Overview
Conditions: 150 mM KOAc, 10 mM MgCl2 and 150 mM bicine (pH 8.5), 24 C. Chemical mapping of a 177-nucleotide RNA with DMS and 2A3. As a SHAPE reagent, 2A3 marks flexible, mostly unpaired nucleotides at the ribose 2'-OH. DMS adducts were read by reverse transcription with MarathonRT. Values cover nucleotides 27 to 126. The data come from the RNA Mapping Database (RMDB), libraries RFM100 and RFMREP.
[RMDB]
RNA sequence: GGGAACGACUCGAGUAGAGUCGAAAAGUGGUGCCACGGUGUCGUGGAAGGCACGCGUAGGCCGAGUGUGAGUGGGUGCGCAAGUGGGUGCGCGAAUGCGCGGGGCGUGCGAGGUGAGUGUGUGCGCCUUUAGAAGACUCUUCGGAGUCUUCUAAAGAAAAGAAACAACAACAACAAC
Reactivity to DMS in 0.01 (KOAc 150mM, MgCl2 10mM, bicine 150mM(pH8.5), 24C), signal-to-noise 6, nucleotides 027 to 126: g020u020g010g010u010g010c010c010a050c020g000g010u000g010u010c020g030u010g030g030a170a130g000g010c010a020c020g010c040g020u010a090g010g000c010c010g010a100g020u020g000u020g010a090g020u020g000g000g020u010g000c050g000c060a050a100g020u020g000g000g020u020g010c020g010c020g000a070a060u030g000c030g000c030g000g000g000g020c080g020u020g010c040g010a100g010g010u010g000a100g010u010g010u010g010u010g000c020g000c050
Reactivity to 2A3 in 0.01 (KOAc 150mM, MgCl2 10mM, bicine 150mM(pH8.5), 24C), signal-to-noise 9, nucleotides 027 to 126: g130u110g040g070u180g020c010c000a020c020g020g010u050g010u050c050g020u120g160g150a170a130g060g000c010a010c030g200c010g030u040a150g020g000c000c010g030a050g040u140g010u030g010a050g020u080g010g010g020u080g000c030g000c030a050a030g030u070g070g030g030u080g010c020g000c010g040a120a090u220g010c010g000c000g010g010g000g010c050g010u040g010c020g010a040g020g020u060g020a100g000u070g000u010g010u030g030c020g020c000